This 207-nucleotide RNA was probed chemically with 2A3 and DMS. For DMS the reverse transcriptase was MarathonRT. The DMS profile rests on 1,908 reads. It was measured as part of the RMDB library M2RFPK.
[RMDB]
RNA sequence: GGGAACGACUCGAGUAGAGUCGAAAAAAAUCACCUCGGUAUGAUUAGGGUGAGACCUAGGAACCGUAGGGGUAUUCUCAAAGGAAGCUUUUCCAGUGACGCCCAUGUAAGUGGGAUAUAACAACAGAUCAGUUUCGCAGUUUCGACUGCGAAACAACGCAUUAUUCGGAUUCGUCCGAAUAAUGCGAAAAGAAACAACAACAACAAC
Reactivity to 2A3 in 0.01 (KOAc 150mM, MgCl2 10mM, bicine 150mM(pH8.5), 24C), signal-to-noise 2, nucleotides 027 to 156: a000a050a000u080c040a060c010c000u000c000g030g010u180a160u230g050a110u050u070a000g030g020g000u070g100a070g040a060c000c010u030a030g000g030a030a020c000c010g030u120a040g000g010g000g010u020a050u040u020c010u000c000a060a050a000g050g010a040a050g120c040u100u130u070u010c000c010a010g020u010g030a010c070g030c000c030c020a020u030g080u140a150a150g020u020g000g000g000a000u060a010u020a060a050c070a020a000c000a010g100a120u150c030a050g010u000u000u010c000g000c000a000g010u000u040u150c200g060a030c000u000g010c000g000a000a000a000c000a000a000
Reactivity to DMS in 0.01 (KOAc 150mM, MgCl2 10mM, bicine 150mM(pH8.5), 24C), signal-to-noise 1, nucleotides 027 to 156: a030a030a030u010c000a050c000c000u000c000g010g040u000a100u000g010a300u010u010a000g000g000g040u000g020a230g010a150c000c000u000a070g030g010a120a150c050c030g030u000a040g060g010g000g040u000a050u000u000c010u000c020a110a070a190g020g020a120a080g030c080u000u020u000u000c000c050a130g010u000g000a070c080g000c010c000c000a060u000g000u080a050a210g020u000g000g000g010a100u000a030u010a110a090c050a080a050c050a070g010a090u010c080a130g010u010u000u000c010g000c000a010g020u000u020u010c230g000a030c000u010g000c000g020a010a000a030c000a010a070